[RMDB]
RNA sequence: GGGAACGACUCGAGUAGAGUCGAAAAGUACGUAGAGUGUCGGCAAGCUCUAUAUAUUGACACUUACGAAGGGUUUUGGUUGUUUUGUAUCUCAAGCCGACUUUGAGUAUUUGAGGAAAAUACGACAUGAAUCCUGUGACGUUCGCGUCACAGGAAACCUCUUUAUUGUGUUCGCACAAUAAAGAGGAAAAGAAACAACAACAACAAC
Reactivity to DMS in 0.01 (KOAc 150mM, MgCl2 10mM, bicine 150mM(pH8.5), 24C), signal-to-noise 2, nucleotides 027 to 156: g010u000a030c030g030u010a030g020a040g020u000g010u000c030g010g010c110a150a300g010c040u000c040u000a010u010a050u000a060u000u010g000a210c080a040c000u000u000a120c080g020a140a190g000g010g000u000u020u000u010g020g020u010u010g000u010u010u000u000g020u000a050u000c040u010c060a080a140g020c010c010g000a100c040u020u010u000g000a270g020u000a040u000u000u000g040a120g030g020a130a050a030a060u000a050c040g010a120c080a070u010g020a120a140u010c000c010u000g040u010g010a010c030g000u010u010c300g060c040g000u010c000a000c000a000g010g000a010a020a050
Reactivity to 2A3 in 0.01 (KOAc 150mM, MgCl2 10mM, bicine 150mM(pH8.5), 24C), signal-to-noise 3, nucleotides 027 to 156: g040u040a020c040g000u010a020g010a020g070u030g020u040c010g000g040c070a140a060g010c030u010c040u030a040u040a010u020a030u120u200g040a010c010a000c050u090u090a030c060g110a080a030g080g000g000u040u070u110u140g070g000u000u030g000u000u020u020u030g050u050a110u020c040u020c090a040a020g020c000c010g020a050c010u050u040u100g050a050g030u000a040u040u050u080g040a060g000g120a020a030a030a010u080a070c050g040a020c030a080u140g090a070a050u040c000c000u000g000u010g000a010c000g000u000u040c200g000c010g080u000c000a000c000a000g010g000a000a010a000
Source: RMDB library M2RFPK, as collected in RNAgym. This 207-nucleotide RNA was probed chemically with DMS and 2A3. The RNA was probed in 150 mM KOAc, 10 mM MgCl2 and 150 mM bicine (pH 8.5) at 24 C. In probing experiments dimethyl sulfate is read out at A N1 and C N3, which are open when not base-paired.